Chemical mapping of a 207-nucleotide RNA with DMS and 2A3. The reactions ran in a buffer of 150 mM KOAc, 10 mM MgCl2 and 150 mM bicine (pH 8.5), at 24 C.
[RMDB]
RNA sequence: GGGAACGACUCGAGUAGAGUCGAAAAGAGGUGGACUGUGACCUUGGAGUCAUGCUGAGUCACCGGCUGUAACCACUGAGACACAGUGGUGAAGAUGAUCUGCAGACUAUAUAGUACAAGAGGCUCCAGGAGUCUAACAGAGCUUAAUGUAGAUCAACCUCCUCAUUAUGUUCGCAUAAUGAGGAGGAAAAGAAACAACAACAACAAC
Reactivity to DMS in 0.01 (KOAc 150mM, MgCl2 10mM, bicine 150mM(pH8.5), 24C), signal-to-noise 3, nucleotides 027 to 156: g000a090g010g020u000g010g000a030c030u010g020u000g010a050c020c010u000u010g000g010a150g060u000c000a070u010g000c070u000g010a160g000u010c030a070c010c010g060g010c120u000g000u000a230a030c000c020a030c000u010g000a220g040a300c240a210c050a020g020u010g020g010u000g000a040a140g010a100u000g000a020u000c020u010g000c030a060g000a050c030u010a120u000a140u000a120g010u000a110c140a090a120g010a190g030g020c000u010c030c060a100g010g010a110g010u000c030u000a080a080c040a050g000a070g000c020u000u010a050a100u000g000u000a020g000a070u010c000a070a270
Reactivity to 2A3 in 0.01 (KOAc 150mM, MgCl2 10mM, bicine 150mM(pH8.5), 24C), signal-to-noise 4, nucleotides 027 to 156: g130a040g020g030u060g020g060a040c040u010g000u020g020a020c010c020u060u130g050g010a050g020u010c020a070u140g010c080u070g020a030g040u030c030a020c060c060g060g000c050u010g010u030a000a010c000c000a010c020u030g050a040g040a200c090a040c000a190g000u000g000g010u000g000a010a010g020a060u090g010a020u000c010u030g020c020a000g020a020c050u010a020u050a050u100a300g080u040a040c010a090a030g030a020g120g010c010u000c010c000a030g080g010a090g020u000c020u010a070a010c010a060g060a030g040c000u070u070a040a020u120g030u020a030g000a090u010c010a010a080

Source information
DMS (dimethyl sulfate) methylates the pairing face of unpaired adenines and cytosines. Values cover nucleotides 27 to 156. For 2A3, 2,332 sequencing reads were counted. It was measured as part of the RMDB library OK3TST.